[RMDB]
RNA sequence: GGGAACGACUCGAGUAGAGUCGAAAAUACCGUCUUCUCCCCGACGGUAUCAAUCCAUAGCUUCACGUUGUGUAGCGUAGGUGGAAGGUAUCGUGUGGUGUAUAAACACCACAUAGUCUCUUAGGGGUCAAGCUGAUAAACUUCGGUUUAUCAGCAAGGUAAUUAAUUUAUUCGUAAAUUAAUUACCAAAAGAAACAACAACAACAAC
Reactivity to 2A3 in 0.01 (KOAc 150mM, MgCl2 10mM, bicine 150mM(pH8.5), 24C), signal-to-noise 8, nucleotides 027 to 156: u000a000c000c000g020u020c030u280u050c040u100c000c000c000c000g000a000c000g000g000u010a000u020c020a030a050u010c010c000a050u060a080g000c010u050u090c020a030c060g300u300u300g010u110g020u050a010g020c030g080u100a090g050g120u030g020g020a040a040g050g020u080a040u190c050g010u000g000u010g040g000u010g060u000a120u110a270a250a020c000a000c010c000a000c000a000u010a000g020u010c010u010c010u110u280a020g000g000g000g020u030c070a050a060g000c000u000g000a000u000a000a000a000c000u030u060c140g090g000u000u000u000a000u000c000a000g000c000a000a000
Reactivity to DMS in 0.01 (KOAc 150mM, MgCl2 10mM, bicine 150mM(pH8.5), 24C), signal-to-noise 2, nucleotides 027 to 156: u010a020c010c010g000u000c010u010u000c050u000c010c000c020c050g000a020c000g020g000u000a000u010c030a080a100u010c020c010a100u000a210g030c040u000u000c020a030c020g040u010u020g030u000g020u000a050g020c030g000u000a050g010g030u020g010g000a060a080g010g030u000a020u010c090g030u000g030u010g020g030u000g040u040a170u020a150a130a120c010a010c000c000a010c000a000u010a020g000u000c030u000c020u000u010a090g060g010g020g010u000c060a060a250g000c000u000g000a030u000a000a010a000c000u010u000c300g020g000u000u000u000a000u000c010a020g020c000a010a020
The record gives the reactivity of an RNA of 207 nucleotides to 2A3 and DMS. For DMS, 5,177 sequencing reads were counted. The RNA was probed in 150 mM KOAc, 10 mM MgCl2 and 150 mM bicine (pH 8.5) at 24 C. For 2A3, 7,399 sequencing reads were counted.